[RMDB]
RNA sequence: GGGAACGACUCGAGUAGAGUCGAAAAGACCGCUGAAUGCGGAAGUACUAGAUCAACUAGAAAGUAGAUCAAUACAAAAGCUACGUCUCGAAACUAGUUGAUCUAGUGCACUCGAGACGUAGAAAGACAUACGUAGGCACUUCGGUGCCUACGUAUGAAAAGAAACAACAACAACAAC
Reactivity to 2A3 in 0.01 (KOAc 150mM, MgCl2 10mM, bicine 150mM(pH8.5), 24C), signal-to-noise 4, nucleotides 027 to 126: g060a010c000c000g000c010u110g240a300a130u300g030c000g000g010a030a000g020u010a020c010u010a020g000a030u010c000a010a000c010u000a040g120a260a250a000g030u090a000g030a060u090c070a050a020u230a100c080a010a120a010a000g020c040u040a020c040g020u040c030u010c050g030a050a080a030c000u010a010g020u010u070g000a010u000c000u000a000g000u000g000c000a020c000u000c010g000a000g000a000c010g000u010a010g080a080a040a010g060a020
Reactivity to DMS in 0.01 (KOAc 150mM, MgCl2 10mM, bicine 150mM(pH8.5), 24C), signal-to-noise 3, nucleotides 027 to 126: g010a070c000c000g000c010u000g010a110a250u030g020c000g020g010a090a150g040u010a040c020u020a090g020a010u010c010a000a010c010u000a060g020a120a100a080g000u000a080g020a020u020c060a080a070u050a120c190a100a070a130a130g010c100u000a030c090g000u000c020u010c030g040a100a090a060c010u000a000g000u040u050g040a030u000c030u000a040g000u000g010c150a040c140u000c000g000a000g000a040c030g000u000a010g000a040a090a050g000a120
Structure probing data (2A3 and DMS) for a 177-nucleotide construct. The DMS profile rests on 4,168 reads. High 2A3 reactivity points to a flexible backbone, as in loops and unpaired stretches. The RNA was probed in 150 mM KOAc, 10 mM MgCl2 and 150 mM bicine (pH 8.5) at 24 C.